This 207-nucleotide RNA was probed chemically with 2A3.
The reactions ran in a buffer of 150 mM KOAc, 10 mM MgCl2 and 150 mM bicine (pH 8.5), at 24 C.
2A3 adducts were read by reverse transcription with SuperScript II with manganese.
The data come from the RNA Mapping Database (RMDB), library OK3TST.

[RMDB]
RNA sequence: GGGAACGACUCGAGUAGAGUCGAAAAAGUAAAAUAAUCAGGACGAAUAAUUCUAAUAAACUCAGAACAAUAUCUCGCAUCCAUAUGUUUGGAGCAAAUAUCGGAAUAAGUAGACAUAGCCGGUUUCCGUUUUACACGUAACCAUUCUAAACAAUUGGGAUCAGCAAUAUUUCGAUAUUGCUGAUCCAAAAGAAACAACAACAACAAC
Reactivity to 2A3 in 0.01 (KOAc 150mM, MgCl2 10mM, bicine 150mM(pH8.5), 24C), signal-to-noise 1, nucleotides 027 to 156: a000g010u010a020a030a060a070u140a010a020u100c070a030g000g000a000c040g020a050a030u060a060a050u110u050c000u010a100a120u070a180a020a030c040u020c120a000g020a040a060c010a100a050u040a040u090c140u010c080g000c020a120u020c060c000a000u000a040u240g160u140u050u040g050g000a010g020c000a020a020a010u110a070u060c020g020g050a030a020u070a120a060g040u050a070g070a040c010a110u080a020g010c000c010g050g000u000u000u000c000c000g010u040u000u060u150a000c000a050c020g010u000a010a010c040c000a010u090u030c050u090a060a060a050c100a050a040u180u120g110